[RMDB]
RNA sequence: GGGAACGACUCGAGUAGAGUCGAAAAGUCUCCCGAUUCGUCGGGAGACCGAGAAAUUCAGGUGAAUUGCUACCUUUAAGUGCAGCUAGAAAUUCAAAGGAAACACCAUGGCGUUCGCGCCAUGGAACAUAGCUGAUACAUUCGUGUAUCAGCUAUGAAAAGAAACAACAACAACAAC
Reactivity to DMS in 0.01 (KOAc 150mM, MgCl2 10mM, bicine 150mM(pH8.5), 24C), signal-to-noise 7, nucleotides 027 to 126: g010u010c000u000c000c000c000g010a020u000u010c160g020u000c000g020g000g000a010g010a010c000c020g000a090g000a300a070a090u010u000c060a020g000g020u010g000a100a060u010u010g000c010u000a020c020c010u000u000u000a040a030g010u000g000c020a020g020c220u010a090g010a060a060a070u010u000c070a050a060a100g010g010a070a060a080c170a130c000c000a000u000g000g010c000g020u000u010c220g020c010g010c000c000a010u000g000g010a050a070
Reactivity to 2A3 in 0.01 (KOAc 150mM, MgCl2 10mM, bicine 150mM(pH8.5), 24C), signal-to-noise 7, nucleotides 027 to 126: g000u010c000u000c000c010c000g000a020u030u070c160g040u010c010g030g000g000a010g000a000c000c000g020a020g150a020a160a040u230u150c080a000g020g010u020g040a140a080u090u040g000c000u000a010c020c000u120u190u270a020a010g010u010g000c000a000g010c030u110a060g170a090a170a090u220u160c100a110a090a070g130g020a090a100a010c050a020c020c000a000u010g000g000c020g010u030u050c210g010c000g000c030c000a000u000g000g000a010a000